This 177-nucleotide RNA was probed chemically with DMS and 2A3. Conditions: 150 mM KOAc, 10 mM MgCl2 and 150 mM bicine (pH 8.5), 24 C. The DMS profile rests on 10,705 reads. Reactivities are rounded to 0.1 and cut off at 0 and 3.

RNA sequence: GGGAACGACUCGAGUAGAGUCGAAAAGAUAUGGAUCGAUACACAACUAUGAAGUGGUUCGGAAACGAACCAUGGAGUUGGUAUUCGAUCCUAAGUCAAAAGGCGCAGGAGUUCGCUCCUGCGCCAAGAUAUGUAUCUUGUUCGCAAGAUACAUAUCAAAAGAAACAACAACAACAAC
Reactivity to DMS in 0.01 (KOAc 150mM, MgCl2 10mM, bicine 150mM(pH8.5), 24C), signal-to-noise 6, nucleotides 027 to 126: g010a030u000a250u000g010g000a010u000c000g010a030u000a010c020a270c170a010a010c020u000a300u010g010a180a250g000u000g000g000u000u000c000g010g000a070a060a060c000g010a010a010c000c000a000u000g000g010a000g020u000u000g010g010u010a000u000u010c000g000a000u000c000c000u000a010a080g010u000c030a100a070a140a130g000g000c000g010c000a010g010g010a030g030u000u010c300g000c000u000c010c000u000g000c000g010c010c000a010a010
Reactivity to 2A3 in 0.01 (KOAc 150mM, MgCl2 10mM, bicine 150mM(pH8.5), 24C), signal-to-noise 5, nucleotides 027 to 126: g010a000u030a010u080g000g000a000u000c010g010a010u040a010c300a000c050a300a100c050u190a300u300g010a010a010g010u000g000g000u010u010c000g000g020a020a020a010c010g000a000a000c020c010a000u010g000g010a000g000u070u120g060g010u030a050u090u300c010g000a000u010c000c000u000a000a000g000u000c010a000a010a050a300g000g000c000g000c010a000g000g040a020g030u110u300c300g180c180u000c000c000u000g000c010g000c000c000a000a000